[RMDB]
RNA sequence: GGGAACGACUCGAGUAGAGUCGAAAACGUUGUCAUCGACAACACCCUAUGCAUUCAUGCUCUGUACGGAUGCGCCGAAAGGUGAGCAAGCCCGAGUUGCCCAGACCUGAAAUGCAACACUUUAGAGAAAACCCGAAGCAGUUCGCUGCUUCGGGAACUUAAGAGGAAUGUUCGCAUUCCUCUUAAGAAAAGAAACAACAACAACAAC
Reactivity to DMS in 0.01 (KOAc 150mM, MgCl2 10mM, bicine 150mM(pH8.5), 24C), signal-to-noise 2, nucleotides 027 to 156: c070g000u000u000g030u000c050a180u010c080g020a060c030a040a090c010a080c020c000c020u020a190u000g000c010a050u000u010c010a090u020g000c020u000c080u000g030u000a100c030g000g020a070u000g020c000g010c100c060g000a110a080a110g000g020u000g010a120g000c030a070a160g030c060c040c040g000a180g010u000u010g020c000c020c010a180g010a080c010c010u000g000a080a070a110u000g030c000a050a090c060a140c060u000u000u010a110g010a150g000a090a070a090a150c000c000c010g010a030a010g030c000a050g010u000u010c280g020c010u000g010c020u000u000c010g000g010g000a000a000
Reactivity to 2A3 in 0.01 (KOAc 150mM, MgCl2 10mM, bicine 150mM(pH8.5), 24C), signal-to-noise 4, nucleotides 027 to 156: c080g000u020u010g020u030c120a220u130c300g020a000c010a010a000c000a040c010c010c010u080a100u100g000c010a010u000u050c010a010u060g020c050u000c010u030g060u030a040c010g020g000a030u040g010c000g040c030c000g050a070a080a050g040g000u090g090a110g010c050a050a080g020c000c000c020g090a080g070u100u120g070c010c030c010a010g010a020c000c010u010g020a050a090a060u050g030c000a040a030c040a010c110u180u210u210a130g020a010g080a100a100a020a030c020c000c000g000a000a000g000c000a020g000u080u140c190g050c110u000g010c000u000u000c000g000g000g000a000a000

The data come from the RNA Mapping Database (RMDB), library M2RFPK. The record gives the reactivity of an RNA of 207 nucleotides to DMS and 2A3. For DMS the reverse transcriptase was MarathonRT. Values are in units of 0.01, from 0 to 300, in steps of 10. 2A3 adducts were read by reverse transcription with SuperScript II with manganese. The reactions ran in a buffer of 150 mM KOAc, 10 mM MgCl2 and 150 mM bicine (pH 8.5), at 24 C. The 2A3 profile rests on 2,063 reads. For DMS, 4,534 sequencing reads were counted.